RNA sequence: GGGAACGACUCGAGUAGAGUCGAAAAGCACGGACUAUGCAUAUUGCCGCCUACAGAAGCAUAGAUUUCCACAAACCAUUCGAGGUGUUUGUGCAAAUCUUUCGCGACUGUAGGCGGCGAACAUGCAGUUUUUAAAAUCCACCCUUCGGGGUGGAAACAAAUCGACAAACUUCGGUUUGUCGAUUUGAAAAGAAACAACAACAACAAC
Reactivity to DMS in 0.01 (KOAc 150mM, MgCl2 10mM, bicine 150mM(pH8.5), 24C), signal-to-noise 1, nucleotides 027 to 156: g050c030a130c120g010g000a120c100u000a100u000g040c000a060u000a120u000u000g000c000c000g030c020c000u000a050c010a020g010a040a300g020c000a080u000a040g010a000u000u000u010c080c010a040c000a000a010a040c300c030a210u000u010c080g030a220g110g090u000g030u000u010u000g020u000g010c110a030a000a030u000c010u020u000u000c090g040c000g000a300c020u020g010u000a010g000g010c000g000g010c010g000a000a000c110a050u000g020c000a080g000u030u000u000u000u000a030a070a120a170u000c000c000a010c010c010c010u000u010c300g130g030g040g060u000g010g000a000a020a080

Chemical mapping of a 207-nucleotide RNA with DMS. For DMS the reverse transcriptase was MarathonRT. The RNA was probed in 150 mM KOAc, 10 mM MgCl2 and 150 mM bicine (pH 8.5) at 24 C. It was measured as part of the RMDB library RFM130.